[RMDB]
RNA sequence: GGGAACGACUCGAGUAGAGUCGAAAAGAUAUGGACCUUAGGGAGAAUGGGAUCGGAAACGAUCCCAAUUCAUCGAUCUAGCGUCCUAAGUCAAAGGAGCCAGUAAUCUUCGGAUUACUGGCUCCAACCCUAGAUGCACGUUCGCGUGCAUCUAGGGAAAAGAAACAACAACAACAAC
Reactivity to DMS in 0.01 (KOAc 150mM, MgCl2 10mM, bicine 150mM(pH8.5), 24C), signal-to-noise 1, nucleotides 027 to 126: g010a020u000a020u010g000g000a030c010c030u010u000a010g000g000g000a010g020a020a000u000g010g000g000a020u010c000g040g000a000a000a020c020g010a020u000c010c000c000a000a000u000u010c010a300u010c220g000a110u010c000u000a000g000c300g030u020c000c010u000a010a070g020u000c000a070a220a230g020g000a020g010c000c010a010g000u020a000a000u000c000u010u050c250g010g000a030u000u000a000c000u000g000g000c000u000c000c010a020a030
Chemical mapping of a 177-nucleotide RNA with DMS. For DMS, 922 sequencing reads were counted. For DMS the reverse transcriptase was MarathonRT. Conditions: 150 mM KOAc, 10 mM MgCl2 and 150 mM bicine (pH 8.5), 24 C.